Source: RMDB libraries RFM100 and RFMREP, as collected in RNAgym. This 177-nucleotide RNA was probed chemically with DMS and 2A3. For 2A3 the reverse transcriptase was SuperScript II with manganese. High DMS reactivity at an A or C suggests that its Watson-Crick edge is free. DMS adducts were read by reverse transcription with MarathonRT.

[RMDB]
RNA sequence: GGGAACGACUCGAGUAGAGUCGAAAAUCUCCCCUGUCAAACUCCAAACCUACGGACGCCGUCGACGCAGGGAAUCCGGUGUGCGGGGUAAGCCUGUGCACCGUGAGGGAGACAACCCAGAGUUAGGUGCACCUAAAUUUUUCGAAAUUUAGGUGCAAAAAGAAACAACAACAACAAC
Reactivity to DMS in 0.01 (KOAc 150mM, MgCl2 10mM, bicine 150mM(pH8.5), 24C), signal-to-noise 5, nucleotides 027 to 126: u000c060u010c000c020c010c090u000g010u000c090a080a100a100c050u000c030c090a100a090a180c050c040u010a040c050g000g000a090c050g000c070c060g000u000c060g010a090c090g000c050a020g000g010g020a090a110u000c050c020g010g010u000g020u000g020c000g010g000g000g020u030a100a150g000c000c020u000g010u000g000c010a010c000c000g020u020g000a020g010g000g020a210g030a100c170a080a150c010c010c010a140g000a100g010u010u010a070g010g010
Reactivity to 2A3 in 0.01 (KOAc 150mM, MgCl2 10mM, bicine 150mM(pH8.5), 24C), signal-to-noise 5, nucleotides 027 to 126: u050c040u030c010c000c000c020u030g080u110c070a100a050a050c020u020c010c040a100a070a080c010c040u060a030c050g060g050a110c080g090c090c040g070u110c030g010a060c030g040c030a010g000g020g030a010a080u020c010c000g000g010u000g000u000g000c020g000g010g000g070u110a060a050g260c000c000u010g010u010g000c010a000c000c010g030u110g010a050g010g050g000a050g000a040c020a030a060c000c000c010a030g030a010g090u060u110a040g000g060